[RMDB]
RNA sequence: GGGAACGACUCGAGUAGAGUCGAAAAUAUACCGCCAUCUUCAGCAAACCCUAAAAAGGAACAAUAGUAAGCACAAUCAUAGCACAUAAAAACGUUAGGUCAAGGUGUAGCUUAUGGGUUGGAAAGAAAUGGGCUACAUUUUCUACAUAAGAAUAUCGUUGAUUUAUGGGUUCGCCCAUAAAUCAACAAAAGAAACAACAACAACAAC
Reactivity to 2A3 in 0.01 (KOAc 150mM, MgCl2 10mM, bicine 150mM(pH8.5), 24C), signal-to-noise 3, nucleotides 027 to 156: u110a000u060a050c020c020g020c010c000a050u050c020u080u060c010a000g000c010a030a050a120c000c010c000u080a040a090a040a010a040g090g000a070a050c040a050a060u090a050g100u080a090a010g030c020a000c020a080a030u070c040a060u060a030g040c070a020c010a070u210a070a090a010a030a010c090g050u080u050a050g070g000u060c050a030a020g010g020u000g000u020a000g010c020u030u030a030u090g000g120g000u050u030g070g070a070a070a040g030a010a070a010u050g000g000g010c000u020a010c000a030u060u020u010u030c030u040a090c010a060u220a090a070g120a150a030u130a070u180c060
Reactivity to DMS in 0.01 (KOAc 150mM, MgCl2 10mM, bicine 150mM(pH8.5), 24C), signal-to-noise 1, nucleotides 027 to 156: u000a100u000a110c100c020g030c030c020a130u000c020u010u000c090a130g010c080a090a100a030c030c040c030u000a010a090a070a160a070g030g000a110a100c070a070a090u000a140g040u010a050a070g020c000a080c030a050a140u010c050a140u000a080g000c010a040c060a120u010a030a100a040a020a030c040g040u010u000a000g000g000u010c090a110a000g000g000u000g070u000a010g010c020u000u000a080u010g040g010g070u000u000g000g030a080a080a080g000a080a040a040u010g040g000g040c040u000a040c030a050u000u000u020u010c020u000a030c040a060u000a070a050g010a120a020u000a050u000c090
The record gives the reactivity of an RNA of 207 nucleotides to 2A3 and DMS. The data come from the RNA Mapping Database (RMDB), library PDB130. For 2A3 the reverse transcriptase was SuperScript II with manganese.